Background
This 207-nucleotide RNA was probed chemically with DMS and 2A3. DMS adducts were read by reverse transcription with MarathonRT. Reactivities are given for positions 27 through 156. The 2A3 profile rests on 3,650 reads. Conditions: 150 mM KOAc, 10 mM MgCl2 and 150 mM bicine (pH 8.5), 24 C.

[RMDB]
RNA sequence: GGGAACGACUCGAGUAGAGUCGAAAACCAGAUGACGGUCCUGCCAUGAAACCGCAACGAGAGCAUGUCGCAUCGAAUGGACUCGGGGAGUCGGCAGCUUGCCCCACGGAUGAGCGCCUAAUGCCGGAAGAGACGUGCAACUUCGGUUGCACGUCAAGCUCUCAAAUAAGUUCGCUUAUUUGAGAGCAAAAGAAACAACAACAACAAC
Reactivity to DMS in 0.01 (KOAc 150mM, MgCl2 10mM, bicine 150mM(pH8.5), 24C), signal-to-noise 2, nucleotides 027 to 156: c000c000a110g000a120u000g000a050c020g020g000u000c100c040u000g000c040c060a080u000g000a120a030a100c010c040g010c060a100a060c030g000a110g000a130g000c020a070u010g010u000c030g030c020a120u010c060g030a130a300u000g010g010a100c050u000c040g010g010g060g040a150g020u000c040g030g020c030a100g030c060u000u000g000c070c000c030c040a120c050g000g000a090u010g000a050g000c020g030c040c020u000a080a070u010g000c000c000g010g020a100a110g020a190g000a000c000g040u000g000c010a000a010c000u000u000c270g060g020u000u000g000c000a000c020g010u000c020a010a070
Reactivity to 2A3 in 0.01 (KOAc 150mM, MgCl2 10mM, bicine 150mM(pH8.5), 24C), signal-to-noise 4, nucleotides 027 to 156: c010c000a020g050a130u130g030a060c020g000g030u030c010c010u030g020c030c010a090u100g080a100a060a040c060c030g050c090a050a060c060g040a020g010a020g150c050a060u080g020u090c040g000c030a040u050c040g030a050a080u080g050g030a040c040u020c070g010g010g000g000a030g080u070c030g030g000c000a020g020c050u050u130g070c000c000c010c030a040c060g020g000a070u110g020a030g040c040g030c010c040u070a090a060u100g050c010c020g010g000a020a030g060a010g000a030c000g000u010g000c000a000a000c000u040u050c160g130g000u010u000g000c010a010c000g000u000c000a000a000